[RMDB]
RNA sequence: GGGAACGACUCGAGUAGAGUCGAAAAGGAGUGAGAGGUACGGUGACGCUCACUCACCUAAGUCGAUCUAGGAGAUGGACGGAGACGCAACACGGAUGGGAGUGAGUUGUGCCAUCCCUCACUCUGGAUGGGAGUGAGAUCCGUGGCACACGUAGGAAACGCACGUAAACUUCGGUUUACGUGCGUUAAAAGAAACAACAACAACAAC
Reactivity to 2A3 in 0.01 (KOAc 150mM, MgCl2 10mM, bicine 150mM(pH8.5), 24C), signal-to-noise 1, nucleotides 027 to 156: g060g040a020g010u040g040a030g040a070g040g040u060a020c150g000g010u070g160a010c010g040c000u000c000a000c010u020c010a300c000c040u100a140a060g000u010c030g010a090u030c040u200a000g090g170a080g140a080u090g020g020a070c030g050g000a070g000a090c140g050c080a000a180c060a030c060g170g000a090u130g040g000g010a030g020u090g010a010g020u010u140g000u150g090c000c000a070u120c000c000c000u000c010a000c000u000c000u000g070g000a020u030g120g000g000a060g020u000g000a030g000a010u000c090c000g030u040g020g000c070a050c000a000c080g060u050a040g060g000a060